Record summary: Chemical mapping of a 177-nucleotide RNA with 2A3 and DMS. The DMS profile rests on 909 reads. It was measured as part of the RMDB library OK2TST.

RNA sequence: GGGAACGACUCGAGUAGAGUCGAAAAGUCUUGCCUAUAUGCCUCAAGAGCCGUCGAUCUUUCGCAAAAUGAGUGUGCAAGAUAAUCUCUUAGCUGGCAUAGAGAUGCUCUACCCCAAAGCCAGCGAGCCAUCUAAGGCAUUCGUGCCUUAGAUGGCAAAAGAAACAACAACAACAAC
Reactivity to 2A3 in 0.01 (KOAc 150mM, MgCl2 10mM, bicine 150mM(pH8.5), 24C), signal-to-noise 2, nucleotides 027 to 126: g000u020c020u030u050g010c000c000u200a180u070a070u300g070c030c010u080c020a030a030g040a060g100c040c070g180u110c050g060a140u060c050u040u190u070c060g020c040a000a060a100a260u130g040a090g160u100g040u090g000c000a000a000g000a010u050a020a070u000c000u010c020u010u050a030g010c000u010g000g000c010a010u050a050g020a000g000a000u110g000c030u050c060u090a100c030c000c040c000a030a060a010g010c020c010a000g000c000g020a020
Reactivity to DMS in 0.01 (KOAc 150mM, MgCl2 10mM, bicine 150mM(pH8.5), 24C), signal-to-noise 2, nucleotides 027 to 126: g010u010c030u000u000g010c020c190u010a150u010a060u020g000c100c040u020c100a090a060g000a170g010c040c150g030u000c170g000a020u000c080u000u010u000c290g030c030a010a020a120a120u010g070a130g000u010g010u000g000c010a040a010g000a010u000a100a040u000c000u000c010u000u000a090g030c000u000g000g060c000a120u000a020g000a000g010a030u020g020c160u010c050u010a220c090c000c040c080a070a020a150g000c000c000a000g000c020g010a080